[RMDB]
RNA sequence: GGGAACGACUCGAGUAGAGUCGAAAAGCAAAUACCUUCGGGUAUUUGCAAAAAGUUUACCACUGAGCGAUAUGUGGUAUAUAAAUGGUCGGGUUGAUCAAAAAAGGUGGGGCUUCGGCCCCACCAAGUAUACAAGUAUCUUCGGAUACUUGUAUACAAAAGAAACAACAACAACAAC
Reactivity to DMS in 0.01 (KOAc 150mM, MgCl2 10mM, bicine 150mM(pH8.5), 24C), signal-to-noise 3, nucleotides 027 to 126: g010c010a010a010a010u010a000c000c000u000u010c220g020g000g020u000a000u000u000u000g010c010a030a040a070a100a110g010u000u000u010a020c000c000a010c010u000g000a160g020c170g010a090u010a090u000g010u010g000g000u010a000u000a030u000a050a060a070u000g010g010u000c010g010g010g010u000u010g010a050u000c020a010a050a070a070a090a090g010g030u000g000g010g030g030c000u000u000c170g030g020c000c000c000c000a000c000c000a000a030